[RMDB]
RNA sequence: GGGAACGACUCGAGUAGAGUCGAAAAGGGAUCAGUGUUUUCACUGAUCCCCACGUCGCUGUUUUCAGCGACGAUUAUCACGUAUACGAUUCGCCGGUAUACGGUAUCUCCUUUGCAUUCCUUCGGGAUUGUUUGGGAGUUACGAUUAUGGCGUAAACCGCAUGCGAUAGUUCGCUAUCGCAUGCGGAAAAGAAACAACAACAACAAC
Reactivity to 2A3 in 0.01 (KOAc 150mM, MgCl2 10mM, bicine 150mM(pH8.5), 24C), signal-to-noise 1, nucleotides 027 to 156: g000g010g020a010u000c000a000g020u000g080u170u220u240u300c000a010c000u000g020a000u020c000c000c010c000a050c010g000u000c000g000c000u030g150u040u140u080u300c030a020g020c000g010a000c000g000a000u020u190a220u300c170a040c150g000u000a000u010a000c020g060a190u060u040c000g000c000c000g000g000u000a000u000a010c000g000g000u000a000u000c000u000c010c010u010u010u000g000c010a000u000u000c020c010u030u220c210g110g000g000a000u000u010g010u000u070u010g000g000g040a010g000u000u000a000c010g040a050u070u050a020u280g000g000c000g000u000a030a000a000

An RNA of 207 nucleotides, treated with 2A3 and read out base by base.
The reactions ran in a buffer of 150 mM KOAc, 10 mM MgCl2 and 150 mM bicine (pH 8.5), at 24 C.
The data come from the RNA Mapping Database (RMDB), library OK3TST.